[RMDB]
RNA sequence: GGGAACGACUCGAGUAGAGUCGAAAAACGUCGCACCAACGGCAGGAAUUCCGGAUCGCCCGCGCGCGCCGAACGCGAAUAGGCGUUCGGCAACGCGUCGACUGGAACAUCGGCGUGGGCCACCUGGGAUCGCAGUCGGCUUCGGCCGACUGCGAUCAAAAGAAACAACAACAACAAC
Reactivity to 2A3 in 0.01 (KOAc 150mM, MgCl2 10mM, bicine 150mM(pH8.5), 24C), signal-to-noise 1, nucleotides 027 to 126: a000c040g030u080c010g030c040a070c090c050a100a020c020g240g060c010a040g000g080a020a010u000u000c000c000g020g020a300u000c000g000c010c130c000g000c010g010c000g010c050g000c010c000g000a000a000c000g050c000g060a160a080u150a180g280g000c000g000u010u030c000g030g000c000a000a000c000g000c030g040u020c000g000a050c040u000g010g030a020a000c000a100u040c030g000g020c000g000u030g060g050g000c070c000a050c010c020u050g070g000